RNA sequence: GGGAACGACUCGAGUAGAGUCGAAAAUUAUACAGUGAAACUGCGAAUGGCUCAUUAUAUCAGUUAUAGUUUAUUUGAUGUUAAACACUUACUUGGAUAUCUGUAGUAAUUCUAGAGUCAAUACAUGAGCGUAAUAUAUAUUCGUAUAUAUUACGCUAAAAGAAACAACAACAACAAC
Reactivity to 2A3 in 0.01 (KOAc 150mM, MgCl2 10mM, bicine 150mM(pH8.5), 24C), signal-to-noise 9, nucleotides 027 to 126: u140u060a070u030a080c020a020g040u030g170a120a110a030c020u050g040c070g110a110a090u030g020g000c000u010c040a040u040u090a040u010a030u090c020a010g010u050u050a060u060a060g030u030u100u040a100u060u090u110g100a090u110g040u100u130a060a060a000c060a000c050u080u090a020c000u040u090g050g000a030u040a030u060c030u040g070u050a060g030u030a070a080u080u020c040u040a050g000a010g040u010c000a030a040u110a080c100a090u160g090
Reactivity to DMS in 0.01 (KOAc 150mM, MgCl2 10mM, bicine 150mM(pH8.5), 24C), signal-to-noise 9, nucleotides 027 to 126: u010u020a170u020a190c050a050g010u010g000a080a080a230c030u000g000c100g010a080a070u000g010g010c020u000c020a070u010u010a030u000a070u000c030a040g010u010u010a040u010a080g010u010u000u000a030u010u010u010g010a100u020g010u010u010a040a050a060c080a100c140u000u000a050c050u000u010g020g010a050u010a030u000c090u000g010u010a060g010u010a040a030u000u010c100u010a090g010a040g020u000c020a040a080u010a070c150a070u010g010